RNA sequence: GGGAACGACUCGAGUAGAGUCGAAAACUCACGUAACACCUACUAGUGCCGUUGAAGGAUUCCUUAUCUGUUCUGGUAAAAGACACAGUCAGGGUAAGCCAUUUUCGAUACUUACAGAGGUAAGUGACUAAAAAUACACUUUCGAGUGUAUUUUUAGAAAAGAAACAACAACAACAAC
Reactivity to DMS in 0.01 (KOAc 150mM, MgCl2 10mM, bicine 150mM(pH8.5), 24C), signal-to-noise 7, nucleotides 027 to 126: c040u000c020a090c130g010u020a080a100c110a050c010c030u020a070c070u010a050g020u010g010c040c020g010u000u000g010a080a090g000g000a110u010u020c030c040u020u010a070u020c020u000g000u000u000c020u000g000g020u040a080a080a100a060g000a040c130a030c040a030g010u000c110a050g010g000g020u010a070a060g000c010c010a080u000u000u000u000c030g000a090u000a030c020u010u010a030c110a090g010a060g010g010u010a030a040g000u000g010a200
Reactivity to 2A3 in 0.01 (KOAc 150mM, MgCl2 10mM, bicine 150mM(pH8.5), 24C), signal-to-noise 9, nucleotides 027 to 126: c010u010c010a050c030g120u120a100a020c020a030c050c020u090a100c030u060a110g030u010g040c010c020g040u030u080g070a080a040g030g020a040u080u100c010c000u060u070a090u100c020u020g070u100u020c010u020g050g050u100a090a140a060a020g040a010c060a000c000a090g030u060c050a010g010g030g050u060a060a030g030c020c010a060u060u030u030u050c020g020a020u020a070c010u030u030a020c050a050g110a020g150g020u040a070a060g020u020g030a020